[RMDB]
RNA sequence: GGGAACGACUCGAGUAGAGUCGAAAAUGGACAUUUAUUUCCUUAUAGUUCUGGAGGCUAGAAAUCCAAGAUCAAAUGGUCUGCAAGUUUGUUUUCUCCUGAAGGUUUUCUUGGCUUGCAGAAGGCCGCAAUAGAAAGGAUUCGUCCUUUCUAUUGCAAAAGAAACAACAACAACAAC
Reactivity to 2A3 in 0.01 (KOAc 150mM, MgCl2 10mM, bicine 150mM(pH8.5), 24C), signal-to-noise 1, nucleotides 027 to 126: u070g020g030a020c020a010u070u160u270a110u000u090u090c010c000u110u070a150u060a160g070u060u090c000u020g050g000a030g020g020c030u040a020g090a080a070a000u060c020c000a050a020g020a050u060c030a040a150a150u150g080g000u020c020u040g010c020a060a020g030u000u030u120g080u030u130u100u020c020u040c020c030u060g070a100a090g110g020u060u050u110u000c000u060u060g070g000c000u050u010g000c020a000g000a010a030g080g030c080c020
Reactivity to DMS in 0.01 (KOAc 150mM, MgCl2 10mM, bicine 150mM(pH8.5), 24C), signal-to-noise 3, nucleotides 027 to 126: u010g000g000a080c140a110u000u000u010a100u020u000u000c010c010u000u010a120u010a130g010u000u000c020u010g010g000a040g010g010c030u000a030g010a070a080a060u000c020c020a100a110g010a080u010c070a100a090a090u000g010g000u000c020u000g010c110a040a060g010u000u000u000g010u010u000u000u010c030u010c050c070u000g000a090a100g010g000u000u010u000u010c000u000u000g010g000c010u010u000g010c080a010g010a090a070g000g010c130c080